[RMDB]
RNA sequence: GGGAACGACUCGAGUAGAGUCGAAAACCUCCGGAAGAUACUUCCGAAGGGCAGGGGCAAUCGCAUCAACCUGAAGGAUCAGGCCAUGAUCGCCAUCAAAGGCAUGAGCUCCGAGAUGCAGGGCAAAGUCAUGGGGAUGCUUUCGCAACUGGAGCAGGUUAAAGCUUUUGUUCGCAAAAGCUUUAACAAAAGAAACAACAACAACAAC
Reactivity to 2A3 in 0.01 (KOAc 150mM, MgCl2 10mM, bicine 150mM(pH8.5), 24C), signal-to-noise 4, nucleotides 027 to 156: c000c000u010c000c010g070g010a020a020g120a160u200a300c050u020u000c010c010g000a030a000g070g030g000c020a010g020g020g000g000c000a040a050u070c080g040c030a010u020c020a050a270c000c010u020g020a080a060g190g060a190u090c010a000g010g000c020c010a010u020g020a030u070c060g020c020c010a030u110c080a150a110a040g020g000c030a030u110g080a020g020c030u030c040c020g030a050g000a050u100g000c070a030g000g010g020c000a080a080a030g080u070c030a060u060g000g000g030g030a010u010g000c000u010u030u030c090g000c030a040a020c020u040g020g020a040g010c060a040g070
Reactivity to DMS in 0.01 (KOAc 150mM, MgCl2 10mM, bicine 150mM(pH8.5), 24C), signal-to-noise 2, nucleotides 027 to 156: c010c010u000c000c000g060g040a030a040g000a260u000a140c060u000u000c000c010g010a000a010g070g010g020c030a080g010g000g030g020c050a040a050u000c090g050c030a220u000c000a140a270c000c000u010g000a080a180g050g040a260u000c020a030g050g010c000c050a080u000g000a060u000c110g030c000c010a130u030c060a060a140a180g030g020c040a180u020g010a200g000c030u000c010c000g030a290g010a130u010g020c080a120g000g000g070c050a140a090a120g020u000c010a040u000g000g000g030g030a190u000g000c030u000u000u020c050g040c010a090a010c070u000g010g020a060g030c080a100g040